[RMDB]
RNA sequence: GGGAACGACUCGAGUAGAGUCGAAAAGAUUACGUGUCGUCGUGGAAUCGAUACUACGCACGAGAUUCCAAGGUCUCUGUAGUACGUCCGCUGGUGACGUCUUUGGAGUCACGUUCGAUAUACGAAAGCUUACUACUAGGUUCGCCUAGUAGUAAGCAAAAGAAACAACAACAACAAC
Reactivity to DMS in 0.01 (KOAc 150mM, MgCl2 10mM, bicine 150mM(pH8.5), 24C), signal-to-noise 6, nucleotides 027 to 126: g000a070u030u030a060c120g020u010g000u010c030g010u010c030g010u010g000g010a030a030u030c050g000a170u000a020c030u000a010c010g010c180a070c110g010a110g000a010u000u000c140c170a080a080g000g020u010c010u000c000u010g010u000a020g010u020a010c000g010u000c010c010g010c100u030g020g010u010g010a000c010g010u000c020u010u000u010g000g010a030g000u000c020a100c050g020u020u000c010g020a090u010a060u020a090c120g010a080a070a110
Reactivity to 2A3 in 0.01 (KOAc 150mM, MgCl2 10mM, bicine 150mM(pH8.5), 24C), signal-to-noise 9, nucleotides 027 to 126: g050a030u110u160a040c060g030u050g050u100c020g010u010c000g000u010g020g070a050a070u150c030g010a030u020a080c020u000a010c010g030c060a030c120g020a010g000a030u080u020c080c020a080a070g100g000u010c010u000c010u040g030u020a020g010u040a020c000g010u000c010c010g020c160u170g070g070u140g020a000c000g020u000c000u020u050u110g060g010a010g010u020c030a030c140g020u060u050c030g030a040u010a010u030a140c070g060a120a040a000
Source information
Chemical mapping of a 177-nucleotide RNA with DMS and 2A3. For 2A3 the reverse transcriptase was SuperScript II with manganese. For DMS the reverse transcriptase was MarathonRT. Source: RMDB library OK1LIB, as collected in RNAgym. Values cover nucleotides 27 to 126. As a SHAPE reagent, 2A3 marks flexible, mostly unpaired nucleotides at the ribose 2'-OH. The DMS profile rests on 19,028 reads.